[RMDB]
RNA sequence: GGGAACGACUCGAGUAGAGUCGAAAACAGCGGCCACAACAUGAACCCUGUCUUCAUAUACAUGGUGCCGAAGCCCUGCCCCCGCGCGCGUAUCGUGCUCCCCGGUUUGUGCGCUCGGCCGGUACGCCGACUAGCUGCCAUUCGUGGCAGCUAGUCGAAAAGAAACAACAACAACAAC
Reactivity to DMS in 0.01 (KOAc 150mM, MgCl2 10mM, bicine 150mM(pH8.5), 24C), signal-to-noise 1, nucleotides 027 to 126: c090a090g000c070g010g010c010c040a060c060a040a080c140a120u000g010a100a090c090c030c040u010g020u000c000u000u000c080a040u010a070u000a100c090a040u000g000g000u000g010c000c040g040a140a140g030c010c040c020u000g020c030c010c000c000c020g030c110g020c110g010c030g000u000a040u010c000g010u000g000c010u000c000c000c010c000g020g000u010u000u010g020u010g020c090g020c070u000c050g020g020c000c020g000g020u000a050c050g000c070